[RMDB]
RNA sequence: GGGAACGACUCGAGUAGAGUCGAAAAAGGUUCGCUGUGGUGCAACUCUUAUUAGUAACUAAUCCAAAGCAAGUAUAGGAGAACACGUUUUUAACUAUUUUUAGGCAGAUAAAAAAUAGUAUUUGACAAAAUCGAUUGUCGUUCGCGACAAUCGAAAGAACCUUAUUGGGUUCGCCCAAUAAGGUUCAAAAGAAACAACAACAACAAC
Reactivity to 2A3 in 0.01 (KOAc 150mM, MgCl2 10mM, bicine 150mM(pH8.5), 24C), signal-to-noise 1, nucleotides 027 to 156: a000g050g040u070u100c020g020c060u070g040u100g060g030u000g000c030a110a110c030u040c000u070u120a180u040u060a030g150u040a100a110c040u030a080a070u090c100c060a070a100a000g050c060a060a040g010u080a030u090a140g050g030a050g000a080a000c050a000c090g000u000u000u000u010u010a030a000c000u000a010u000u000u000u000u040a040g070g000c100a030g050a090u130a030a070a000a000a000a000u010a000g040u030a100u110u060u060g000a000c030a080a170a080a150u050c000g010a010u000u000g000u000c000g010u060u040c110g010c000g090a000c000a000a000u020c010g010a000a000a000
Chemical mapping of a 207-nucleotide RNA with 2A3. Reactivities are given for positions 27 through 156. It was measured as part of the RMDB library M2RFPK. 2A3 adducts were read by reverse transcription with SuperScript II with manganese.